[RMDB]
RNA sequence: GGGAACGACUCGAGUAGAGUCGAAAAGGUGCGAUAUUGGUUAAAAAAUGAGCGAAAUUUACGUAAGAUGCAUCUUACCUAAUCUUACUUAAAGUGGUCGACCAGUUGGUAAGUUGAUGAAUUUUGUGCAUAAAAAAAGGUAAGACUGAAAUCAUCACUAACCACGUUCAUUCGUGAACGUGGUUAGAAAAGAAACAACAACAACAAC
Reactivity to DMS in 0.01 (KOAc 150mM, MgCl2 10mM, bicine 150mM(pH8.5), 24C), signal-to-noise 1, nucleotides 027 to 156: g000g010u000g040c040g010a090u000a130u000u000g010g030u000u000a000a050a070a030a080a070u010g010a170g000c050g000a030a060a170u000u010u000a040c070g000u000a000a010g010a090u000g020c100a100u020c020u000u030a020c010c010u000a090a040u000c040u000u000a000c000u000u000a030a030a120g020u000g000g000u000c010g030a100c020c070a190g010u000u000g000g000u010a060a090g010u000u000g020a070u020g000a070a160u000u000u000u000g000u000g030c080a100u030a030a000a040a050a020a040a100g010g000u000a020a020g000a080c150u020g000a040a080a080u000c030a020u010c000a240
Reactivity to 2A3 in 0.01 (KOAc 150mM, MgCl2 10mM, bicine 150mM(pH8.5), 24C), signal-to-noise 4, nucleotides 027 to 156: g000g000u020g050c060g030a030u040a080u200u150g020g040u100u120a030a060a060a000a030a050u220g010a070g070c060g040a090a070a050u090u060u040a060c020g000u010a010a010g000a000u050g010c000a060u030c000u030u000a010c000c000u020a050a060u000c000u010u020a010c000u040u080a030a020a040g060u080g110g010u110c040g020a110c070c020a040g020u050u050g030g010u070a140a110g010u070u030g010a040u000g050a050a130u060u040u070u060g070u040g030c070a030u220a110a160a010a000a000a000a000g010g020u030a000a030g020a000c040u030g030a020a070a010u050c030a010u040c010a010